RNA sequence: GGGAACGACUCGAGUAGAGUCGAAAACACUUUCUCGAAGUCUAUUCACACGAGACAGCCCCUUGUUUUGUAGAACGUGAAUUUGUUGCGGACAUCGGAGAGGGAAUCCCUAUCAUGAAAUCUUUUGUGGAUAGAAUAGACGGUGACAAGGACGACCAUUAUCCCACUCAUUCGUGAGUGGGAUAAUAAAAGAAACAACAACAACAAC
Reactivity to DMS in 0.01 (KOAc 150mM, MgCl2 10mM, bicine 150mM(pH8.5), 24C), signal-to-noise 1, nucleotides 027 to 156: c060a100c040u000u000u010c020u000c030g010a090a100g010u000c030u000a050u000u000c000a060c010a150c060g010a040g000a060c020a180g000c040c040c010c030u020u010g000u000u000u000u000g060u000a090g010a070a100c080g030u000g000a040a100u000u030u010g020u010u010g000c000g010g020a080c070a070u010c030g010g030a090g000a180g020g020g010a240a120u010c070c020c010u000a160u000c040a090u000g000a050a140a120u000c050u010u000u000u000g010u000g030g010a060u000a070g000a090a070u000a150g000a100c060g020g040u000g020a060c030a030a060g000g010a040c010g000a250c080c090
Reactivity to 2A3 in 0.01 (KOAc 150mM, MgCl2 10mM, bicine 150mM(pH8.5), 24C), signal-to-noise 2, nucleotides 027 to 156: c040a010c010u090u080u050c020u040c040g020a190a020g070u000c000u030a020u000u110c010a000c010a000c030g020a010g040a040c010a030g070c010c010c000c040u010u010g060u030u060u040u010g040u030a090g090a160a010c070g040u050g020a080a160u110u080u060g240u090u070g070c040g020g070a010c000a030u040c040g000g020a010g000a020g000g020g000a010a010u080c000c010c030u020a020u130c110a020u130g110a080a190a130u140c070u060u080u030u060g070u020g010g040a020u000a010g060a020a040u050a100g030a010c020g020g010u010g010a010c020a030a010g050g020a020c080g070a010c030c040